[RMDB]
RNA sequence: GGGAACGACUCGAGUAGAGUCGAAAAACACAACAGGUGGUCGGUACACGAGUGACUAUUUCCGAAUUUAUGGCAGCGGUGGUAUCUAUUGGCAAGACUAUGGAGGUGGGUGGUACAUGGUUGACUCGACAUUCAUGAGAGUCUAUGGCGACAAAUAGUCUGGUGGAUUAUUCGUAAUCCACCAGACAAAAGAAACAACAACAACAAC
Reactivity to DMS in 0.01 (KOAc 150mM, MgCl2 10mM, bicine 150mM(pH8.5), 24C), signal-to-noise 2, nucleotides 027 to 156: a030c030a120c080a050a070c080a050g060g020u000g020g000u000c030g050g000u000a130c110a050c030g000a100g050u000g030a110c090u000a140u000u000u010c070c000g000a110a110u010u010u000a100u020g030g000c030a060g070c030g030g020u010g030g020u000a030u000c050u000a160u000u020g000g020c060a020a110g020a110c050u000a070u010g010g000a050g020g020u000g000g030g030u020g010g010u000a070c070a040u000g010g060u000u020g020a100c050u000c010g010a070c060a060u000u000c080a100u000g010a300g000a070g030u000c000u000a070u000g000g000c060g010a100c040a010a020a080u010a160
Reactivity to 2A3 in 0.01 (KOAc 150mM, MgCl2 10mM, bicine 150mM(pH8.5), 24C), signal-to-noise 2, nucleotides 027 to 156: a000c110a010c020a020a090c050a050g000g050u020g000g060u050c050g030g040u030a070c040a020c050g020a020g020u060g030a070c070u070a090u070u080u020c040c040g040a020a030u050u240u010a170u130g020g000c010a010g020c000g000g050u030g010g000u030a060u010c030u020a070u070u050g000g000c070a080a010g030a090c030u060a090u100g060g020a020g040g020u070g020g010g010u020g020g030u040a040c030a050u060g010g020u020u020g020a020c020u010c010g070a070c000a100u080u100c000a050u140g040a040g000a010g040u000c000u000a030u030g000g050c020g010a020c070a000a130a030u130a030